[RMDB]
The record gives the reactivity of an RNA of 177 nucleotides to DMS and 2A3. For DMS the reverse transcriptase was MarathonRT. The RNA was probed in 150 mM KOAc, 10 mM MgCl2 and 150 mM bicine (pH 8.5) at 24 C. For 2A3, 781 sequencing reads were counted.
RNA sequence: GGGAACGACUCGAGUAGAGUCGAAAACUCGGCUAUGUCGGUAGACUGUCGCGUGGAAUAAACACUUCGGACCCGGGGGGCAGUACCCCGGCGCCUCCACCACCAGCCGCAGGCCGAAGAUUUUCGGGCUAGUCAUAUAGUUCGCUAUAUGACUAGCAAAAGAAACAACAACAACAAC
Reactivity to DMS in 0.01 (KOAc 150mM, MgCl2 10mM, bicine 150mM(pH8.5), 24C), signal-to-noise 1, nucleotides 027 to 126: c050u000c010g010g000c030u000a100u000g020u000c020g000g040u000a080g040a180c160u000g000u030c150g010c220g020u000g040g030a050a200u010a120a140a060c070a090c170u020u030c110g010g020a060c070c000c000g000g000g000g000g000g000c300a050g020u010a120c010c000c010c000g020g000c150g040c070c000u010c000c040a030c000c040a070c020c060a300g000c000c030g030c060a110g000g000c010c000g000a010a020g000a180u010u000u010u000c010g010g000
Reactivity to 2A3 in 0.01 (KOAc 150mM, MgCl2 10mM, bicine 150mM(pH8.5), 24C), signal-to-noise 1, nucleotides 027 to 126: c010u000c010g000g020c050u120a150u300g090u300c050g020g020u060a100g040a300c120u100g060u150c100g030c100g070u060g000g050a080a070u100a200a240a000c060a070c190u170u120c120g220g000a200c000c010c030g010g000g020g030g040g060c020a020g040u080a070c020c050c010c020g000g000c000g040c010c030u000c000c040a030c020c000a000c000c000a000g030c000c040g000c000a010g040g050c000c020g010a000a040g010a060u020u000u050u070c000g050g050